[RMDB]
Chemical mapping of a 177-nucleotide RNA with DMS. High DMS reactivity at an A or C suggests that its Watson-Crick edge is free. DMS adducts were read by reverse transcription with MarathonRT. Values cover nucleotides 27 to 126. The DMS profile rests on 1,597 reads. The reactions ran in a buffer of 150 mM KOAc, 10 mM MgCl2 and 150 mM bicine (pH 8.5), at 24 C.
RNA sequence: GGGAACGACUCGAGUAGAGUCGAAAAGAUAUGGAAAACAUCGUGCUUGAUAAUUUAGCAUCGAUCUCCGUGUCGGAAACGACACCGGAGGGAGCUACAUUAUCAAGCACGAUGUUUUCCUAAGUCAGAGAGACUAAUUCUUCGGAAUUAGUCUCUCAAAAGAAACAACAACAACAAC
Reactivity to DMS in 0.01 (KOAc 150mM, MgCl2 10mM, bicine 150mM(pH8.5), 24C), signal-to-noise 2, nucleotides 027 to 126: g020a080u000a300u010g000g000a020a020a000a040c020a020u000c000g020u000g000c020u000u000g000a020u000a000a020u000u000u000a000g000c010a300u000c180g000a070u000c000u000c000c000g000u000g010u000c000g000g000a140a090a250c040g000a010c000a020c170c120g020g020a020g010g020g000a050g020c000u030a010c070a000u000u000a010u000c010a010a000g010c010a000c000g010a000u000g000u000u000u000u000c000c000u000a030a060g010u010c030a120